[RMDB]
RNA sequence: GGGAACGACUCGAGUAGAGUCGAAAAGAUAUGGAAUAGUUGCGGGAGAACGUCUUUCGGAAACGAAAGCGUUCGAAGAACGGCACUCUAUUCCUAAGUCAAACCCCAUCUGUUCGCAGAUGGGGAACAAUUGGAAAAUCUUCGGAUUUUCCAAUUGAAAAGAAACAACAACAACAAC
Reactivity to 2A3 in 0.01 (KOAc 150mM, MgCl2 10mM, bicine 150mM(pH8.5), 24C), signal-to-noise 2, nucleotides 027 to 126: g010a010u010a000u080g030g000a010a000u000a000g030u020u030g030c070g110g030g070a300g020a080a000c000g110u140c070u000u010u010c000g000g010a000a010a030c000g020a020a000a000g000c000g000u000u000c000g010a010a000g070a140a020c040g050g000c010a020c120u140c000u010a000u000u000c000c000u000a000a000g010u020c020a100a030a300c000c000c000c000a010u000c000u030g030u040u130c300g000c070a000g020a000u000g000g010g000g000a010a020
Reactivity to DMS in 0.01 (KOAc 150mM, MgCl2 10mM, bicine 150mM(pH8.5), 24C), signal-to-noise 2, nucleotides 027 to 126: g010a020u000a100u010g000g010a030a010u000a020g000u000u000g050c020g000g040g000a120g000a010a000c000g000u010c000u000u000u000c010g020g000a020a020a050c010g010a010a020a000g010c000g010u000u000c020g000a080a120g020a090a180c150g000g010c010a010c190u010c030u000a000u000u000c000c010u000a010a070g000u000c010a110a100a210c010c000c000c000a000u000c000u000g010u000u020c200g030c020a000g010a000u000g000g000g010g000a020a010
An RNA of 177 nucleotides, treated with 2A3 and DMS and read out base by base. 2A3 adducts were read by reverse transcription with SuperScript II with manganese. For 2A3, 2,817 sequencing reads were counted. Values cover nucleotides 27 to 126.